[RMDB]
This 170-nucleotide RNA was probed chemically with 2A3 and DMS. High DMS reactivity at an A or C suggests that its Watson-Crick edge is free. The reactions ran in a buffer of 150 mM KOAc, 10 mM MgCl2 and 150 mM bicine (pH 8.5), at 24 C. For DMS, 69,290 sequencing reads were counted. Source: RMDB library 15KLIB, as collected in RNAgym.
RNA sequence: GGGAACGACUCGAGUAGAGUCGAAAAUGGAUCCGUGGGACUACCCUCUCCACCCUCCCAACACACUCCUUCCCCCCUGCGGGGCUUCCCCAUAAGAUGGCAGGAACCCACUCAUUGGGGUCCGCUGAUACGAAGUACUUCGGUACUUCGAAAAGAAACAACAACAACAAC
Reactivity to 2A3 in 0.01 (KOAc 150mM, MgCl2 10mM, bicine 150mM(pH8.5), 24C), signal-to-noise 8, nucleotides 027 to 129: u100g040g010a040u030c070c050g030u080g010g010g010a040c080u110a160c040c000c010u020c010u030c010c000a040c010c010c000u020c010c000c010a080a020c090a000c020a020c040u040c010c000u030u060c010c000c000c000c000c010u030g020c040g010g010g000g000c010u050u030c010c000c000c000a030u090a090a060g090a090u130g050g000c090a100g130g040a050a040c010c010c000a040c020u120c040a130u070u160g000g000g000g000u000c000c000g000c010u030g040a020u040a140
Reactivity to DMS in 0.01 (KOAc 150mM, MgCl2 10mM, bicine 150mM(pH8.5), 24C), signal-to-noise 9, nucleotides 027 to 129: u050g000g020a010u000c090c040g000u050g000g000g000a150c090u000a130c100c020c010u000c050u020c040c000a110c010c000c000u000c020c030c020a110a110c190a100c120a090c060u020c030c030u020u030c010c010c000c010c000c000u050g000c000g000g000g000g000c060u010u000c020c010c000c040a060u000a090a100g010a030u030g000g030c060a100g070g000a080a070c050c000c000a030c180u050c110a120u030u020g000g000g010g000u040c000c000g000c030u030g000a080u000a120